[RMDB]
This 177-nucleotide RNA was probed chemically with DMS and 2A3. The 2A3 profile rests on 1,169 reads. The DMS profile rests on 3,649 reads.

RNA sequence: GGGAACGACUCGAGUAGAGUCGAAAAUACAAGAAGGGGGGACGGAGAAGGCUAUGUUGGCCGGGCGACCGUUGUCCCGGUUUAAGCGUGUAGGCUGGUUUUCCAGGCAAAUCCGGAAGAAAAUGAACUGUAAAUGAUCUUUCGAGAUCAUUUACAGAAAAGAAACAACAACAACAAC
Reactivity to DMS in 0.01 (KOAc 150mM, MgCl2 10mM, bicine 150mM(pH8.5), 24C), signal-to-noise 4, nucleotides 027 to 126: u000a080c110a070a080g020a150a130g000g020g010g000g000g010a050c030g000g000a090g000a250a160g020g000c020u000a050u010g030u010u000g010g000c010c010g000g010g010c300g010a070c110c090g000u000u010g000u010c010c000c000g000g000u000u000u000a040a100g020c050g000u000g000u000a070g020g000c010u010g000g000u010u000u000u000c030c020a160g010g020c060a020a050a070u010c040c010g000g010a080a080g010a060a050a070a090u010g000a060a160
Reactivity to 2A3 in 0.01 (KOAc 150mM, MgCl2 10mM, bicine 150mM(pH8.5), 24C), signal-to-noise 1, nucleotides 027 to 126: u090a030c050a130a000g170a120a130g040g000g020g000g000g000a000c020g010g020a020g000a000a030g010g000c020u070a050u300g210u100u180g130g000c000c000g000g020g000c030g040a150c090c020g010u020u040g070u090c000c000c020g000g010u040u020u020a030a020g040c040g020u070g000u060a000g140g030c030u050g010g000u010u060u070u060c000c000a000g000g050c000a090a040a070u060c000c000g050g050a060a030g070a030a120a020a050u160g030a080a020
The data come from the RNA Mapping Database (RMDB), library M2PK90. High 2A3 reactivity points to a flexible backbone, as in loops and unpaired stretches. For 2A3 the reverse transcriptase was SuperScript II with manganese.